Overview
An RNA of 207 nucleotides, treated with DMS and 2A3 and read out base by base. 2A3 adducts were read by reverse transcription with SuperScript II with manganese. For DMS, 2,251 sequencing reads were counted.

[RMDB]
RNA sequence: GGGAACGACUCGAGUAGAGUCGAAAAAUGAGAUCCCAUCUUGCACACUGUGCUAAUUUGAGAUUCUCAUGCCACCUACUUGGAGAGAUCUGGACUAGAAGUCAGGGCAUCUGACUCUGCCAGCCACAAAACGUACAAGGCUUCGGCCUUGUACGAAGUUGUUUAUUUGCUUCGGCAAAUAAACAACAAAAGAAACAACAACAACAAC
Reactivity to DMS in 0.01 (KOAc 150mM, MgCl2 10mM, bicine 150mM(pH8.5), 24C), signal-to-noise 1, nucleotides 027 to 156: a040u000g000a030g000a060u000c000c030c000a000u000c040u000u000g000c020a020c010a260c150u030g090u000g050c010u000a010a040u000u000u010g030a010g020a070u010u030c000u010c010a020u000g010c070c060a090c020c000u000a110c120u000u000g060g010a110g020a160g020a130u000c000u010g010g000a080c040u010a070g000a090a070g000u010c010a040g000g010g030c220a170u010c030u000g010a030c020u000c050u010g030c000c020a130g000c070c060a090c080a070a040a120a100c030g000u000a000c000a030a020g000g000c000u000u000c250g070g020c000c010u000u000g010u010a000c000g020a000a060
Reactivity to 2A3 in 0.01 (KOAc 150mM, MgCl2 10mM, bicine 150mM(pH8.5), 24C), signal-to-noise 4, nucleotides 027 to 156: a000u020g000a000g000a010u000c010c000c000a000u010c020u030u030g010c010a030c030a070c180u280g020u020g020c030u060a060a060u020u010u010g040a030g000a010u300u050c000u000c000a000u040g050c020c030a050c010c020u080a100c030u090u090g090g020a040g000a020g020a130u080c010u020g030g000a070c030u100a100g020a150a000g100u010c000a020g030g080g190c060a150u110c070u000g000a000c000u000c000u010g010c000c000a000g030c030c000a070c030a020a150a070a000c010g010u010a000c000a000a030g000g010c000u040u080c150g060g000c000c000u020u000g000u020a010c000g000a000a000
The reactions ran in a buffer of 150 mM KOAc, 10 mM MgCl2 and 150 mM bicine (pH 8.5), at 24 C.